RNA sequence: GGGAACGACUCGAGUAGAGUCGAAAACUGUCUCAGCGUUCAUCCCCUGAUCAAGGAUGCCCGAAACGGUGAGGCGGAAAGCAAAUUAAAUAACGUCAACCCAUCGGGACGGUUGGCCAGUUAAGAAAAAACCGGGGAGUCUUCGGACUCCCCGGAACAUCCUUAAGUUGUUCGCAACUUAAGGAUGAAAAGAAACAACAACAACAAC
Reactivity to 2A3 in 0.01 (KOAc 150mM, MgCl2 10mM, bicine 150mM(pH8.5), 24C), signal-to-noise 3, nucleotides 027 to 156: c010u010g000u000c000u000c010a060g140c000g000u000u010c000a000u010c020c000c000c010u030g040a080u030c010a010a020g010g000a000u000g000c000c010c000g030a020a010a000c010g000g220u000g000a000g020g020c080g060g080a170a080a000g040c110a070a070a120u200u220a090a090a130u230a120a010c020g000u000c010a010a000c000c000c000a020u060c020g010g010g020a010c010g000g000u000u010g020g000c000c010a060g050u110u120a130a100g050a120a180a010a020a020a000c010c000g010g010g000g010a000g020u020c020u060u070c140g040g000a000c000u000c010c000c020c000g000g000a000a000
Reactivity to DMS in 0.01 (KOAc 150mM, MgCl2 10mM, bicine 150mM(pH8.5), 24C), signal-to-noise 1, nucleotides 027 to 156: c000u010g010u010c020u020c040a040g010c000g010u010u020c010a060u000c020c020c010c020u020g050a150u000c060a210a050g000g010a020u000g000c090c070c000g010a140a030a070c010g000g030u000g000a100g050g020c000g010g020a030a120a100g050c090a080a100a210u020u000a080a110a070u030a110a050c120g020u000c000a010a030c000c000c020a140u010c050g010g040g010a080c140g010g000u000u000g000g010c010c050a000g010u000u000a150a150g020a010a180a100a090a090a160c000c060g040g020g050g020a040g050u000c010u020u010c270g030g010a010c000u000c030c000c000c010g000g020a000a020